Source: RMDB library OK3TST, as collected in RNAgym. An RNA of 207 nucleotides, treated with 2A3 and DMS and read out base by base. The DMS profile rests on 2,164 reads. 2A3 adducts were read by reverse transcription with SuperScript II with manganese.
RNA sequence: GGGAACGACUCGAGUAGAGUCGAAAAGGUGUACUCACUGUUCUUACUGUCAAAUGCACUGUAACAUCCAUGUUAAUUUGAUACAUGCUCUUGGAUUUGGAUUCUUGUUCAACUGUCUCCGUUCUUUAUAUAUAAUUGGCCACUGGUCCCAUCCUGACUGAUAGUCGUGAUUCGUCACGACUAUCAGAAAAGAAACAACAACAACAAC
Reactivity to 2A3 in 0.01 (KOAc 150mM, MgCl2 10mM, bicine 150mM(pH8.5), 24C), signal-to-noise 4, nucleotides 027 to 156: g000g000u030g030u020a050c030u040c090a040c030u040g050u130u040c000u060u050a110c020u020g040u060c020a030a010a080u080g040c070a030c050u050g030u070a080a030c030a050u050c030c000a030u040g010u020u170a200a200u170u100u150g050a040u040a050c020a010u030g030c000u010c010u080u050g020g010a030u050u020u100g080g000a040u070u050c030u050u120g030u070u050c040a120a080c070u060g020u040c000u040c050c020g040u090u050c040u060u200u000a130u010a000u010a000u020a170a160u120u040g010g000c020c010a040c040u040g020g000u020c010c000c000a000u030c010c010u050g050a060
Reactivity to DMS in 0.01 (KOAc 150mM, MgCl2 10mM, bicine 150mM(pH8.5), 24C), signal-to-noise 1, nucleotides 027 to 156: g060g000u010g000u020a130c050u000c050a090c060u010g020u000u030c050u020u030a080c090u000g040u000c030a040a080a110u000g030c040a060c060u010g030u000a090a090c070a080u000c070c040a090u000g000u000u000a060a130u010u000u000g020a130u000a030c050a060u000g000c070u000c070u000u000g040g010a070u000u000u010g000g000a140u000u000c020u000u000g000u000u000c050a070a110c030u000g010u010c020u020c010c030g000u000u000c010u000u000u000a040u000a120u000a100u000a100a120u000u000g000g000c020c050a070c010u010g010g020u000c030c040c010a060u020c000c020u010g000a300